[RMDB]
RNA sequence: GGGAACGACUCGAGUAGAGUCGAAAACUAUAGCCAUGAUCACACCAGCGUGCCACAAUAACUAAAUUCUGAAGGGAAUGUGAGUAUGUCUGCAAUGUUCAGAAAAAAAGUCAGAUCUGUGAGUGCCUACCUGCUCCGUAUUCGUACGGAGCAGGUAAAAAGAAACAACAACAACAAC
Reactivity to 2A3 in 0.01 (KOAc 150mM, MgCl2 10mM, bicine 150mM(pH8.5), 24C), signal-to-noise 1, nucleotides 027 to 126: c030u020a020u190a100g040c000c060a050u070g000a030u030c020a000c000a010c080c040a050g010c000g050u030g050c000c010a030c050a000a000u110a080a020c130u150a060a200a190u250u000c080u100g110a070a040g020g030g000a070a090u050g010u030g030a010g070u060a000u060g070u010c000u050g030c030a070a000u060g010u140u090c040a030g220a060a040a000a000a000a000a000g060u030c040a020g000a000u040c000u090g090u020g030a040g050u000g090c010c000
Reactivity to DMS in 0.01 (KOAc 150mM, MgCl2 10mM, bicine 150mM(pH8.5), 24C), signal-to-noise 1, nucleotides 027 to 126: c050u000a100u020a070g000c050c070a100u020g020a050u000c040a040c040a050c160c060a030g030c030g010u010g020c010c020a010c090a100a070u000a060a090c070u020a130a080a070u010u000c040u000g000a120a020g010g020g000a040a030u000g010u000g020a070g000u000a020u010g030u010c030u010g020c090a090a140u000g000u010u000c060a030g040a010a000a080a040a070a040a120g000u000c040a030g010a050u010c030u020g020u000g000a070g000u000g000c020c060
Chemical mapping of a 177-nucleotide RNA with 2A3 and DMS. For DMS the reverse transcriptase was MarathonRT. The DMS profile rests on 809 reads. The RNA was probed in 150 mM KOAc, 10 mM MgCl2 and 150 mM bicine (pH 8.5) at 24 C. It was measured as part of the RMDB library OK2TRN. High 2A3 reactivity points to a flexible backbone, as in loops and unpaired stretches. 2A3 adducts were read by reverse transcription with SuperScript II with manganese.